This 177-nucleotide RNA was probed chemically with 2A3 and DMS. Source: RMDB library OK2TRN, as collected in RNAgym. The 2A3 profile rests on 1,047 reads. Values cover nucleotides 27 to 126.
[RMDB]
RNA sequence: GGGAACGACUCGAGUAGAGUCGAAAAGUAGACGUUCCAACUGGUGUGUAUGAUAUGCUUGAGUCUCAACACAUAAUCACCAGUGGUCUUAGAUAUAGAGUUCAUUGCAUGUCUGGGUUCUGUGGAGUCAUGUGUGGACUUUCGAGUCCACACAUGAAAAAGAAACAACAACAACAAC
Reactivity to 2A3 in 0.01 (KOAc 150mM, MgCl2 10mM, bicine 150mM(pH8.5), 24C), signal-to-noise 2, nucleotides 027 to 126: g050u110a020g010a070c050g070u120u020c030c020a020a040c050u030g050g000u010g070u030g030u030a030u090g030a120u020a040u230g060c130u050u040g060a100g170u100c080u010c090a050a110c050a010c020a050u040a050a120u080c010a010c010c010a000g030u010g020g040u020c010u050u060a060g030a130u090a040u030a150g010a000g070u010u030c030a040u030u170g030c030a000u080g020u010c000u030g000g060g020u030u070c010u040g020u060g040g040a030g050
Reactivity to DMS in 0.01 (KOAc 150mM, MgCl2 10mM, bicine 150mM(pH8.5), 24C), signal-to-noise 3, nucleotides 027 to 126: g000u010a030g020a110c030g020u000u000c050c020a180a060c020u000g000g010u000g020u010g010u000a040u000g010a140u000a040u010g020c100u000u010g010a120g020u020c170u010c030a050a010c130a050c050a030u000a060a070u010c000a010c010c010a030g010u010g010g010u000c050u010u010a080g000a110u010a090u020a090g010a040g000u000u000c030a050u000u010g020c030a040u010g000u010c060u000g010g010g020u000u000c020u000g010u000g010g010a110g010